[RMDB]
The data come from the RNA Mapping Database (RMDB), library 15KLIB.
The record gives the reactivity of an RNA of 170 nucleotides to DMS and 2A3.
Values cover nucleotides 27 to 129.
RNA sequence: GGGAACGACUCGAGUAGAGUCGAAAAAUAGGCUUAUCAAGCGAGGUGGAGGGACUGGCCCGAUGAAACCCGGCAGCCAGAAAUGGUGCUAAUUCCUGCAGCGGAAACGUUGAAAGAUGAGCCGAUGAAGCAGACGGGUUCGCCCGUCUGAAAAGAAACAACAACAACAAC
Reactivity to DMS in 0.01 (KOAc 150mM, MgCl2 10mM, bicine 150mM(pH8.5), 24C), signal-to-noise 3, nucleotides 027 to 129: a020u050a100g000g070c040u020u000a050u010c040a130a100g000c000g030a120g050g010u040g010g010a100g000g040g000a090c160u040g000g030c000c060c070g040a080u000g000a110a090a040c120c030c010g030g030c110a000g000c020c000a000g020a030a040a090u000g000g050u030g050c060u000a000a110u000u060c010c010u000g040c070a020g000c030g020g030a070a070a060c070g070u000u000g000a100a080a090g020a000u000g000a010g030c000c000g030a150u070g030a050a020g030
Reactivity to 2A3 in 0.01 (KOAc 150mM, MgCl2 10mM, bicine 150mM(pH8.5), 24C), signal-to-noise 3, nucleotides 027 to 129: a010u150a010g000g000c000u010u000a010u050c020a060a010g040c050g070a080g020g020u070g000g020a010g030g000g010a030c040u070g050g000c000c000c000g120a180u050g020a030a050a000c020c000c000g010g020c000a040g170c000c000a010g040a010a030a020u050g000g000u060g000c010u020a020a050u080u040c000c000u050g090c040a010g000c010g040g040a040a020a000c010g010u000u020g030a090a060a030g000a000u010g010a010g010c010c020g020a030u120g030a020a040g050